[RMDB]
RNA sequence: GGGAACGACUCGAGUAGAGUCGAAAACAAGGGUAGUUCGCUACCCUUGAAAUUCUAGUCGCUAGAAAACGAUCAUAACUAGCGACUAGAAAAACGAUCGAAAAACUCAAUUCUUCGGAAUUGAGAACAUAAAUACCGACUUCGGUCGGUAUUUAUGAAAAGAAACAACAACAACAAC
Reactivity to DMS in 0.01 (KOAc 150mM, MgCl2 10mM, bicine 150mM(pH8.5), 24C), signal-to-noise 2, nucleotides 027 to 126: c010a000a010g000g000g000u010a000g010u000u010c260g030c010u000a010c000c000c000u000u010g010a040a100a100u000u010c000u000a000g000u000c000g020c000u000a000g000a080a110a100a140c160g000a110u010c090a050u000a060a180c000u000a000g000c000g000a020c000u010a000g010a000a010a010a100a100c150g020a060u000c110g000a010a080a070a170a280c000u000c000a000a000u000u000c000u000u020c120g020g000a000a000u000u000g000a000g000a070a090
Reactivity to 2A3 in 0.01 (KOAc 150mM, MgCl2 10mM, bicine 150mM(pH8.5), 24C), signal-to-noise 2, nucleotides 027 to 126: c000a000a010g000g000g000u000a010g060u050u050c080g020c050u010a020c000c000c010u000u000g000a000a000a000u010u000c000u010a000g000u000c000g000c010u000a010g070a160a280a070a060c090g140a220u230c070a130u180a270a110c000u000a020g000c000g010a000c000u010a010g010a000a000a000a000a010c030g000a060u200c080g060a070a000a070a080a080c000u010c000a030a000u020u010c000u070u080c200g110g000a000a000u000u020g000a020g000a000a000